[RMDB]
RNA sequence: GGGAACGACUCGAGUAGAGUCGAAAACGAGCUGCUUCUUCUUGUUCUCGAGGGCCUUCCUUCGUCGGUGAUCCCGCCUCUCCUCGUCGGUGAAUCCUCCCCCGGGGGGCCUCUUCCUAGGUCCGGAUACGUCCACUGUUCGCAGUGGACAAAAGAAACAACAACAACAAC
Reactivity to DMS in 0.01 (KOAc 150mM, MgCl2 10mM, bicine 150mM(pH8.5), 24C), signal-to-noise 4, nucleotides 027 to 129: c010g030a120g040c050u040g020c070u030u010c050u020u020c010u010u080g020u050u010c030u020c060g020a120g010g000g010c030c040u000u000c030c020u000u000c070g060u040c080g020g050u040g020a120u030c010c010c020g030c000c000u010c020u010c030c020u020c060g040u020c050g000g000u020g010a030a030u030c000c000u010c010c000c020c010c010g030g010g000g010g000g030c010c000u010c030u000u000c020c020u040a080g000g000u050c030c000g020g010a000u000a090c120
Reactivity to 2A3 in 0.01 (KOAc 150mM, MgCl2 10mM, bicine 150mM(pH8.5), 24C), signal-to-noise 7, nucleotides 027 to 129: c040g010a010g030c020u060g020c010u060u020c000u060u020c020u070u140g050u100u060c050u010c050g040a080g010g040g040c010c010u050u060c030c000u050u060c040g110u020c040g020g030u060g040a100u040c000c010c000g000c010c000u010c010u010c000c000u030c020g060u010c020g040g000u050g050a060a060u040c010c000u020c000c010c010c000c000g010g000g000g010g040g000c010c000u000c010u030u030c000c010u020a040g000g030u020c010c000g030g020a080u080a090c080
Structure probing data (DMS and 2A3) for a 170-nucleotide construct. The RNA was probed in 150 mM KOAc, 10 mM MgCl2 and 150 mM bicine (pH 8.5) at 24 C. Reactivities are given for positions 27 through 129. The data come from the RNA Mapping Database (RMDB), library 15KLIB. The DMS profile rests on 25,312 reads.